[RMDB]
RNA sequence: GGGAACGACUCGAGUAGAGUCGAAAAAUGUAGUGACUCGUCAACAUCACGUAGCGAUUGUGUACGGCAGGGACUAGGACGCCAAUCUCCUGCCUCCUGCUCCGGGGCUCUUUUACACAUGUUGGUGGUCUCCCCCUGCGCCCACCGUCCUGUCCUAAGGUAGCGUAUUAUUCGUAAUACGCUACCUAAAAGAAACAACAACAACAAC
Reactivity to 2A3 in 0.01 (KOAc 150mM, MgCl2 10mM, bicine 150mM(pH8.5), 24C), signal-to-noise 2, nucleotides 027 to 156: a000u150g030u060a060g010u000g050a010c010u020c100g090u050c160a060a050c030a110u060c040a000c090g020u030a020g050c040g060a070u030u120g020u020g000u110a040c080g050g030c030a000g020g070g000a030c040u160a090g040g000a000c030g050c050c040a040a110u040c050u040c070c110u040g020c000c000u010c000c010u090g030c040u030c040c020g000g000g010g020c030u020c090u140u180u120u170a030c040a010c020a030u170g000u020u020g020g000u050g050g030u000c030u060c030c040c010c010c000u000g000c020g000c020c010c000a020c000c010g020u040c010c020u030g020u070c000c000u000a000
Reactivity to DMS in 0.01 (KOAc 150mM, MgCl2 10mM, bicine 150mM(pH8.5), 24C), signal-to-noise 1, nucleotides 027 to 156: a130u020g000u000a070g010u000g000a040c030u000c080g060u000c070a110a070c030a100u000c060a040c040g010u000a100g000c030g010a070u000u000g020u010g080u010a110c080g020g020c010a030g030g020g000a060c090u020a070g010g010a040c040g040c040c030a040a050u000c090u000c050c040u000g010c010c000u000c040c040u110g020c060u020c060c060g000g030g040g020c090u010c040u040u000u000u000a150c080a120c090a140u000g020u000u000g000g020u010g010g020u000c000u000c070c030c000c000c000u000g040c080g000c030c010c000a040c080c010g010u000c020c010u000g000u000c030c000u000a200